[RMDB]
RNA sequence: GGGAACGACUCGAGUAGAGUCGAAAAGGACGGGGAGAGAAACCUCGAACGAAUUAUGGCUAUAAUUGCACUGACUAUGAUGGUCUUUGACGCUGAUCGUAGUGAUUGCGUGUAUAAGGUGCUCAACGUUCGAGCGACUGUUCGCAGUCGCUCGAACAAAAGAAACAACAACAACAAC
Reactivity to 2A3 in 0.01 (KOAc 150mM, MgCl2 10mM, bicine 150mM(pH8.5), 24C), signal-to-noise 1, nucleotides 027 to 126: g000g100a000c010g040g000g050g000a020g030a000g060a150a300a170c000c000u000c000g000a040a000c000g010a010a010u200u140a080u180g000g000c040u070a050u080a190a040u240u000g010c000a000c030u040g040a000c000u030a040u070g030a070u050g040g080u020c020u300u050u110g040a080c040g090c160u080g100a000u040c000g000u030a000g000u080g120a050u030u030g000c000g000u000g000u000a020u060a060a040g090g000u000g030c000u000c230a000a270c000
The record gives the reactivity of an RNA of 177 nucleotides to 2A3. The reactions ran in a buffer of 150 mM KOAc, 10 mM MgCl2 and 150 mM bicine (pH 8.5), at 24 C. The 2A3 profile rests on 454 reads.